The record gives the reactivity of an RNA of 207 nucleotides to DMS and 2A3. The 2A3 profile rests on 5,743 reads. The RNA was probed in 150 mM KOAc, 10 mM MgCl2 and 150 mM bicine (pH 8.5) at 24 C.

RNA sequence: GGGAACGACUCGAGUAGAGUCGAAAACACUCUUCGGAGUGGCAGGGACCUUUGUGACGAUCCUACGACAUGCUAAUUCCAUCGCCCAUUGGGCGAUGUCGUGAGUUAGCAACAGCGUAGGAGUCGUCACUCUGGUAGGGCGUGACUUCGGUCACAAAUAGAUACAGAGGUUCGCCUCUGUAUCUAUAAAAGAAACAACAACAACAAC
Reactivity to DMS in 0.01 (KOAc 150mM, MgCl2 10mM, bicine 150mM(pH8.5), 24C), signal-to-noise 3, nucleotides 027 to 156: c010a030c010u010c010u000u010c270g040g020a050g040u000g010g000c100a150g000g010g000a070c000c010u000u010u000g020u000g010a030c010g000a080u000c010c000u000a020c020g010a040c070a300u000g000c000u000a010a020u000u000c000c000a060u000c010g030c000c000c020a300u000u010g070g020g030c010g010a000u000g000u010c130g030u000g020a030g020u000u000a010g000c000a020a060c100a140g000c010g030u000a050g020g000a020g010u000c010g030u000c000a000c010u000c020u000g010g020u000a070g000g000g020c070g000u000g000a040c010u000u000c210g070g000u000c010a020c010a030a090
Reactivity to 2A3 in 0.01 (KOAc 150mM, MgCl2 10mM, bicine 150mM(pH8.5), 24C), signal-to-noise 6, nucleotides 027 to 156: c010a010c000u040c030u100u140c300g130g000a010g010u030g030g010c110a130g050g080g050a040c010c020u030u000u020g000u000g000a000c000g000a000u010c000c000u000a010c000g100a110c040a050u060g000c010u000a010a000u010u020c010c000a010u020c010g010c000c000c090a300u300u300g010g000g000c010g010a000u010g010u050c040g230u070g020a010g010u000u020a010g040c000a010a020c060a030g080c000g000u000a000g010g000a010g010u030c000g000u010c000a000c000u000c000u020g010g000u020a070g030g060g090c090g000u010g000a000c010u020u040c200g100g000u020c010a010c000a000a100